[RMDB]
RNA sequence: GGGAACGACUCGAGUAGAGUCGAAAAGGUUUGACACUGAUGAAGCGAUGAAGCAAGCCAUUAUCAAUCAUUACCAAUCGCAUUUGCCUUUGAUGCCUGAACAAAUCUUAUUGAGCGCUUGCUCUAACUAGCUUUCAUAUUUCGAUAUGAAAGCUAGAAAAGAAACAACAACAACAAC
Reactivity to 2A3 in 0.01 (KOAc 150mM, MgCl2 10mM, bicine 150mM(pH8.5), 24C), signal-to-noise 8, nucleotides 027 to 126: g020g000u030u050u060g040a050c040a010c090u080g020a070u090g030a100a020g030c020g040a040u060g070a050a010g020c030a020a000g010c010c030a090u140u110a100u100c060a100a060u050c010a020u040u080a050c000c020a030a050u060c030g000c030a040u070u040u140g030c010c000u110u050u070g030a050u110g030c000c030u030g020a050a020c020a050a060a050u030c040u080u120a120u090u120g020a040g000c080g060c180u120u170g000c010u020c010u020a040a040
Reactivity to DMS in 0.01 (KOAc 150mM, MgCl2 10mM, bicine 150mM(pH8.5), 24C), signal-to-noise 9, nucleotides 027 to 126: g010g010u000u010u000g010a120c110a070c080u000g000a120u010g020a100a100g020c080g010a040u000g010a110a080g010c030a040a040g010c010c030a080u010u000a070u010c100a100a080u000c050a050u000u000a150c090c040a070a060u010c100g000c030a160u000u000u000g010c040c040u000u010u010g000a060u010g010c050c070u000g000a070a100c100a020a060a040u010c050u000u000a150u000u000g000a060g020c100g000c120u000u010g010c010u000c050u000a060a220

Structure probing data (2A3 and DMS) for a 177-nucleotide construct. The 2A3 profile rests on 13,873 reads. The reactions ran in a buffer of 150 mM KOAc, 10 mM MgCl2 and 150 mM bicine (pH 8.5), at 24 C. The DMS profile rests on 14,059 reads.